[RMDB]
RNA sequence: GGGAACGACUCGAGUAGAGUCGAAAAAAAGCGCAAUAAAGCGCAUCAAUUUGUCCGGUAACGCCAUCUGCUUUUUCGGCCGCAAAAGUGGCUUUGGCUUUAGCGACCUGCGUAUGGUCAGGUUUAACUGCUUUAUCACCGAACAAGACGGACAGGGCGAUGAGAUAACAUUCGUGUUAUCUCAUCGAAAAGAAACAACAACAACAAC
Reactivity to DMS in 0.01 (KOAc 150mM, MgCl2 10mM, bicine 150mM(pH8.5), 24C), signal-to-noise 3, nucleotides 027 to 156: a040a060a100g020c040g010c020a110a150u010a090a090a140g020c010g020c030a090u000c100a050a130u000u000u010g010u000c000c020g040g040u000a070a080c120g000c010c030a030u000c030u000g000c020u000u000u000u020u000c030g000g010c030c060g070c190a050a060a040a030g020u000g000g000c180u020u000u000g030g000c030u000u000u000a070g030c010g020a030c000c000u000g040c080g000u000a090u010g010g030u000c000a050g020g010u000u000u000a050a060c040u000g030c000u000u000u000a090u010c060a080c000c020g000a020a030c080a050a070g020a110c050g020g010a030c040a070g010g010g000
Reactivity to 2A3 in 0.01 (KOAc 150mM, MgCl2 10mM, bicine 150mM(pH8.5), 24C), signal-to-noise 5, nucleotides 027 to 156: a000a000a000g050c070g000c040a100a170u200a200a120a030g020c020g000c010a040u080c010a050a130u050u050u040g020u010c020c020g020g030u080a070a010c060g000c020c010a020u020c010u040g020c000u030u040u020u070u080c060g080g010c080c040g030c070a010a040a020a030g020u020g000g000c000u060u040u010g000g000c000u060u060u090a030g000c010g020a020c010c010u020g030c020g050u130a140u210g090g040u130c010a010g020g000u020u010u080a040a040c050u110g010c000u060u060u050a120u190c050a020c080c000g010a050a030c020a070a020g060a030c030g010g000a000c030a040g010g010g030
Chemical mapping of a 207-nucleotide RNA with DMS and 2A3. For DMS, 7,318 sequencing reads were counted. For 2A3 the reverse transcriptase was SuperScript II with manganese. It was measured as part of the RMDB library OK3TST.